[RMDB]
Record summary
An RNA of 207 nucleotides, treated with DMS and read out base by base. For DMS, 2,152 sequencing reads were counted. Conditions: 150 mM KOAc, 10 mM MgCl2 and 150 mM bicine (pH 8.5), 24 C. It was measured as part of the RMDB library M2RFPK.
RNA sequence: GGGAACGACUCGAGUAGAGUCGAAAAUGGGCCGUGUGCUUAACCAGGAGAAGAUCUCCUUCUCUCCAACGUUGUUGCCAACUCAUGAUUCUCCUAACCUGUGCUUGGAGAGACGUGGACCCAGAGUAAAACGAAGGGUGCUUCGGCACCCUUCGAACCUAUAACGGUAGUUCGCUACCGUUAUAGGAAAAGAAACAACAACAACAAC
Reactivity to DMS in 0.01 (KOAc 150mM, MgCl2 10mM, bicine 150mM(pH8.5), 24C), signal-to-noise 1, nucleotides 027 to 156: u010g020g020g020c040c020g020u000g030u010g060c100u000u000a050a090c070c060a080g000g030a080g020a070a110g030a160u000c120u010c070c000u020u010c010u010c020u000c030c020a110a100c140g020u000u020g000u010u000g000c020c040a090a090c110u000c100a080u000g010a140u000u000c010u010c020c030u000a050a000c040c050u000g010u000g050c060u000u010g000g010a080g010a010g020a040c040g020u000g010g000a090c000c000c050a300g010a220g000u000a060a090a170a150c030g020a050a010g040g020g070u000g030c040u000u010c300g040g000c000a020c000c000c000u010u000c000g000a010a040

Values cover nucleotides 27 to 156.